[RMDB]
RNA sequence: GGGAACGACUCGAGUAGAGUCGAAAAGAUAUGGAUUAGAACUACAAAGCGAGCCGUUGAAAUCGGAAACGAUGGAGGCUCAAUCUUUGCUAAUCCUAAGUCAAAGAGUGUUCUUCGGAACACUCAACGAUAUCUAGACGUUCGCGUCUAGAUAUCGAAAAGAAACAACAACAACAAC
Reactivity to 2A3 in 0.01 (KOAc 150mM, MgCl2 10mM, bicine 150mM(pH8.5), 24C), signal-to-noise 3, nucleotides 027 to 126: g030a030u090a030u130g010g000a020u010u020a010g010a170a100c160u210a070c300a030a000a010g030c070g050a000g000c020c030g150u280u140g090a160a170a020u010c010g000g030a080a020a050c010g020a000u030g000g090a020g010g000c000u000c000a010a010u020c000u010u010u010g000c000u010a010a010u000c000c000u000a130a020g060u020c060a060a090a150g020a000g000u010g000u030u000c010u050u100c300g040g020a000a010c010a000c010u000c000a010a000
Reactivity to DMS in 0.01 (KOAc 150mM, MgCl2 10mM, bicine 150mM(pH8.5), 24C), signal-to-noise 3, nucleotides 027 to 126: g010a050u000a300u010g010g010a030u000u000a020g000a120a100c080u040a300c010a000a000a010g030c300g010a010g030c010c000g000u000u000g000a130a070a030u010c010g000g000a100a060a150c000g000a010u010g030g000a090g010g010c000u000c000a040a030u010c000u000u000u000g020c020u000a000a030u000c010c000u000a050a120g000u010c030a070a080a170g000a010g010u010g010u000u000c000u020u000c220g000g000a020a010c000a000c000u000c000a020a080
Conditions: 150 mM KOAc, 10 mM MgCl2 and 150 mM bicine (pH 8.5), 24 C. Chemical mapping of a 177-nucleotide RNA with 2A3 and DMS. It was measured as part of the RMDB library TTRDEL. For 2A3 the reverse transcriptase was SuperScript II with manganese. For DMS the reverse transcriptase was MarathonRT. For DMS, 2,456 sequencing reads were counted. For 2A3, 4,322 sequencing reads were counted.